[RMDB]
RNA sequence: GGGAACGACUCGAGUAGAGUCGAAAAGAUAUGGAUCCCGGACUUUCAACAGCUACUGAUCGGAAACGAUCAGGUAGACAUGAAAGAAGGGAUCCUAAGUCAAAACUGUGGUGUUCGCACCACAGAAGAUUUACAACUUGUUCGCAAGUUGUAAAUCAAAAGAAACAACAACAACAAC
Reactivity to 2A3 in 0.01 (KOAc 150mM, MgCl2 10mM, bicine 150mM(pH8.5), 24C), signal-to-noise 5, nucleotides 027 to 126: g010a000u040a010u080g000g000a000u010c000c030c020g100g220a180c080u030u060u020c140a300a160c060a180g020c000u020a000c000u010g010a000u000c000g000g030a060a020a040c010g010a000u000c000a000g000g000u000a010g020a030c030a300u300g000a020a010a000g050a060a080g000g020g000a000u000c000c000u000a000a000g020u000c020a020a010a150a220c010u000g000u010g060g000u010g040u080u060c300g040c100a000c000c010a010c000a000g000a010a010
Reactivity to DMS in 0.01 (KOAc 150mM, MgCl2 10mM, bicine 150mM(pH8.5), 24C), signal-to-noise 6, nucleotides 027 to 126: g010a050u010a300u010g000g000a010u000c000c000c000g010g010a300c090u010u000u000c000a090a100c300a250g010c000u000a020c000u000g000a010u000c000g010g000a120a070a150c000g010a010u000c000a040g010g010u000a000g000a040c080a300u000g000a010a010a010g010a300a270g000g010g000a000u000c000c000u000a010a060g000u000c020a120a080a100a210c010u000g010u000g010g030u000g020u000u020c220g020c000a010c010c000a010c000a000g000a070a090